[RMDB]
RNA sequence: GGGAACGACUCGAGUAGAGUCGAAAAUGCCUAAUUCAAGGAAUUAGCGUGCCUUCAUGCUAAGGGUUUGAUAUCUGCUAAAACCCGGUGCAUUCAUCGAUGCAGGUUAAGCCAAAGGGAUGUCCCGAAAAGAACGCAAGGUUCGCCUUGCGUUCAACCGAUAACACUCGUUCGCGAGUGUUAUCGGAAAAGAAACAACAACAACAAC
Reactivity to 2A3 in 0.01 (KOAc 150mM, MgCl2 10mM, bicine 150mM(pH8.5), 24C), signal-to-noise 2, nucleotides 027 to 156: u140g010c020c010u000a020a040u120u060c160a180a050g160g000a080a120u030u030a020g040c070g150u010g000c000c000u060u110c020a050u100g010c000u050a060a050g020g010g010u050u030u010g020a040u010a080u140c100u110g000c080u050a030a030a010a030c000c000c000g040g000u020g030c000a080u070u200c010a090u100c090g100a020u060g000c020a000g040g000u090u060a000a010g010c010c030a080a070a060g020g010g010a060u130g060u110c030c000c000g000a010a020a020a040g050a020a000c000g010c000a000a010g000g000u000u000c070g040c070c000u000u000g020c000g000u000u000c000a000a000